[RMDB]
Chemical mapping of a 177-nucleotide RNA with 2A3 and DMS. It was measured as part of the RMDB library OK2TST. For DMS, 24,273 sequencing reads were counted. The RNA was probed in 150 mM KOAc, 10 mM MgCl2 and 150 mM bicine (pH 8.5) at 24 C. For 2A3, 25,891 sequencing reads were counted. DMS adducts were read by reverse transcription with MarathonRT.

RNA sequence: GGGAACGACUCGAGUAGAGUCGAAAAAGUUGAGAGAUGGGUGGGAAUUGGGGACAAUAAACCGUCCCACCUGCCUGGUACCUUGACCCUGGGAAAGGCUGGGAAGGUGAGAUCCUGGGGCAGAUGCCCGUAUGAACUAAUUCGUUAGUUCAUACGGAAAAGAAACAACAACAACAAC
Reactivity to 2A3 in 0.01 (KOAc 150mM, MgCl2 10mM, bicine 150mM(pH8.5), 24C), signal-to-noise 9, nucleotides 027 to 126: a000g110u100u130g050a090g000a010g010a120u120g010g020g030u040g000g000g040a050a070u160u260g050g000g000g040a010c050a030a070u180a100a090a020c010c010g010u000c000c000c000a010c000c000u000g000c000c000u010g010g030u070a070c020c000u040u130g230a300c010c000c010u020g010g010g020a070a110a030g210g000c060u040g060g060g120a140a100g060g010u050g020a100g010a030u010c000c010u010g000g000g010g000c010a030g030a090u120g050c020
Reactivity to DMS in 0.01 (KOAc 150mM, MgCl2 10mM, bicine 150mM(pH8.5), 24C), signal-to-noise 9, nucleotides 027 to 126: a100g010u010u000g010a130g000a080g010a080u000g010g010g030u000g000g000g000a070a080u010u010g020g010g000g020a110c120a070a070u010a050a090a130c110c040g010u000c000c000c000a020c010c010u000g000c030c010u000g010g020u000a080c060c020u000u000g000a110c020c020c020u000g000g010g000a060a080a120g010g010c070u000g010g010g010a110a090g010g010u000g010a130g000a140u000c020c010u000g010g000g000g020c060a050g000a080u010g010c130